[RMDB]
RNA sequence: GGGAACGACUCGAGUAGAGUCGAAAAGCAUGGUGGCACAUGCCUGUAAUCCCAGCUACUCGGGAAGCUGAGGCAGGAGAAUCGCUUGAACCCUGGAGGCAGAGGUUGCGGUGAGUCGAGAUCGCGCCACUGCACUCCAGCCUGGGCAACAAGAGCAUAAAUUUAAUGGGUUCGCCCAUUAAAUUUAAAAAGAAACAACAACAACAAC
Reactivity to DMS in 0.01 (KOAc 150mM, MgCl2 10mM, bicine 150mM(pH8.5), 24C), signal-to-noise 2, nucleotides 027 to 156: g010c060a040u000g010g030u000g010g020c000a120c030a070u010g010c010c000u000g010u000a090a130u000c010c010c010a070g000c030u000a030c050u000c050g010g030g010a110a120g010c020u000g010a050g000g030c040a060g000g010a130g010a050a050u000c000g000c030u000u000g010a070a070c030c020c020u000g000g020a070g030g020c020a020g000a060g020g030u000u000g060c020g030g040u000g010a100g020u010c120g060a120g000a050u010c030g030c030g010c000c010a090c020u010g010c000a060c010u010c020c010a030g010c020c030u010g000g020g010c000a040a100c050a050a120g000a120g030c020a280
Reactivity to 2A3 in 0.01 (KOAc 150mM, MgCl2 10mM, bicine 150mM(pH8.5), 24C), signal-to-noise 3, nucleotides 027 to 156: g010c000a010u030g020g040u050g030g050c030a000c000a070u030g000c010c000u050g050u140a120a060u040c000c000c000a000g000c030u040a030c020u040c030g040g000g060a050a040g000c050u060g040a020g070g000c030a010g040g040a060g030a080a050u090c080g000c050u030u040g060a060a070c000c030c000u010g000g000a010g000g020c010a000g020a020g020g040u190u300g060c000g000g020u040g070a130g070u130c080g070a030g050a160u010c010g000c010g010c010c000a030c010u000g030c070a160c070u000c010c000a000g000c000c020u070g000g030g010c020a030a030c010a090a000g000a010g050c060a070